[RMDB]
RNA sequence: GGGAACGACUCGAGUAGAGUCGAAAAGAUAUGGAAUUUGCCCAUCACUCUUUGAUCUCGGAAACGAGGGAGAGUUUUGGGUAUAAAUUCCUAAGUCAAAAGUAGUUUCGGUUCGCCGAAACUACAACUCAUUGUAAGUGUUCGCACUUACAAUGAGAAAAGAAACAACAACAACAAC
Reactivity to DMS in 0.01 (KOAc 150mM, MgCl2 10mM, bicine 150mM(pH8.5), 24C), signal-to-noise 2, nucleotides 027 to 126: g020a050u000a300u000g000g000a040a000u000u000u000g000c010c000c010a000u000c040a000c000u000c000u000u010u020g000a070u010c000u010c000g010g000a110a070a200c010g000a010g000g000g000a000g010a020g000u000u000u000u000g020g000g000u000a000u000a010a010a030u000u000c000c000u000a050a100g020u000c040a080a090a120a130g020u010a000g000u000u000u000c000g000g010u000u020c270g020c010c000g020a000a010a010c000u000a000c010a060a140
Reactivity to 2A3 in 0.01 (KOAc 150mM, MgCl2 10mM, bicine 150mM(pH8.5), 24C), signal-to-noise 2, nucleotides 027 to 126: g040a010u090a050u160g010g000a010a030u030u020u050g000c000c000c000a000u020c010a000c010u040c040u230u300u120g150a120u120c010u000c000g000g070a130a080a070c000g020a010g000g000g000a010g000a010g000u010u010u010u000g000g000g000u030a020u030a010a020a000u010u000c000c000u000a160a050g050u050c040a000a000a080a140g000u000a000g000u000u000u000c010g000g080u040u090c300g040c090c010g000a020a000a000c000u000a000c000a010a010
The record gives the reactivity of an RNA of 177 nucleotides to DMS and 2A3. The data come from the RNA Mapping Database (RMDB), library TTRDEL. The reactions ran in a buffer of 150 mM KOAc, 10 mM MgCl2 and 150 mM bicine (pH 8.5), at 24 C. Reactivities are given for positions 27 through 126.